[RMDB]
RNA sequence: GGGAACGACUCGAGUAGAGUCGAAAAAUGUGGGAAAUGGGACUUUGGGUCAACCUAGUGGAUCGGGUCCAGUGUUAGCUGCUUACUGGUCUGCCCAUUCCAAGCCGGGAGUUGGGCUGAGUGACCUGGGCGAAGGGCUGGGUUGCGCACGUCCUAGGUUAUGAGAGCAGUUCGCUGCUCUCAUAACAAAAGAAACAACAACAACAAC
Reactivity to 2A3 in 0.01 (KOAc 150mM, MgCl2 10mM, bicine 150mM(pH8.5), 24C), signal-to-noise 2, nucleotides 027 to 156: a010u110g020u090g000g000g030a020a100a190u080g020g000g010a020c050u180u100u110g120g010g000u090c030a020a010c000c000u040a020g010u000g070g090a110u070c060g040g000g090u000c000c000a000g000u020g010u230u060a080g060c010u040g040c070u030u060a130c070u200g040g100u100c100u070g000c000c000c000a000u000u000c010c000a000a100g130c120c120g040g000g000a040g050u140u120g020g000g000c000u020g030a020g000u050g020a030c000c010u010g050g000g000c130g070a100a020g030g000g000c010u020g000g010g000u050u020g000c150g020c010a000c060g000u000c000c000u030a030g010